[RMDB]
RNA sequence: GGGAACGACUCGAGUAGAGUCGAAAACGAGAAAGCCGAGCAGGAAGAACGCGCCAUCGAGUACCGCGAGGCUUUCGCCGAGUGUACCGAGGCAAAUGACUGGAAUGCGUGGGCUGAAUCAUUCAAAAAAGCGCAGAUUUUCGGGCUUACCCGCAAGACGAUCAUAAGUAUUCGUACUUAUGAUCGUAAAAGAAACAACAACAACAAC
Reactivity to 2A3 in 0.01 (KOAc 150mM, MgCl2 10mM, bicine 150mM(pH8.5), 24C), signal-to-noise 5, nucleotides 027 to 156: c040g000a010g040a050a040a000g030c020c020g010a040g000c020a060g030g050a100a020g040a080a030c040g030c010g020c070c010a220u060c020g040a080g050u010a060c090c070g020c000g020a020g010g020c000u060u090u040c020g000c000c010g000a030g000u080g010u010a010c010c010g010a010g020g010c020a070a060a070u170g020a040c020u040g040g170a070a050u050g010c030g040u160g050g040g000c010u000g030a000a010u110c030a060u180u200c110a080a080a020a020a020a000g040c080g000c070a020g020a080u070u040u060u150c030g030g000g000c020u030u030a070c010c010c010g010c040a010a030g130
Reactivity to DMS in 0.01 (KOAc 150mM, MgCl2 10mM, bicine 150mM(pH8.5), 24C), signal-to-noise 3, nucleotides 027 to 156: c050g010a080g000a100a120a060g010c000c000g000a170g030c040a070g050g010a130a060g030a090a080c040g010c260g030c010c040a200u000c040g010a130g050u010a030c030c030g020c030g000a300g010g010c010u000u010u010c080g020c020c030g000a240g020u000g020u000a040c010c000g010a150g000g040c020a040a080a030u000g000a130c030u000g010g000a170a120u000g020c010g020u000g020g030g020c040u010g010a120a150u000c050a100u000u010c090a000a070a070a090a110a090g000c030g020c050a080g000a160u000u000u000u000c060g020g010g000c010u000u000a090c010c000c000g010c050a100a210g000

Source information: Chemical mapping of a 207-nucleotide RNA with 2A3 and DMS. For 2A3 the reverse transcriptase was SuperScript II with manganese. The reactions ran in a buffer of 150 mM KOAc, 10 mM MgCl2 and 150 mM bicine (pH 8.5), at 24 C. Source: RMDB library OK3TST, as collected in RNAgym. DMS adducts were read by reverse transcription with MarathonRT.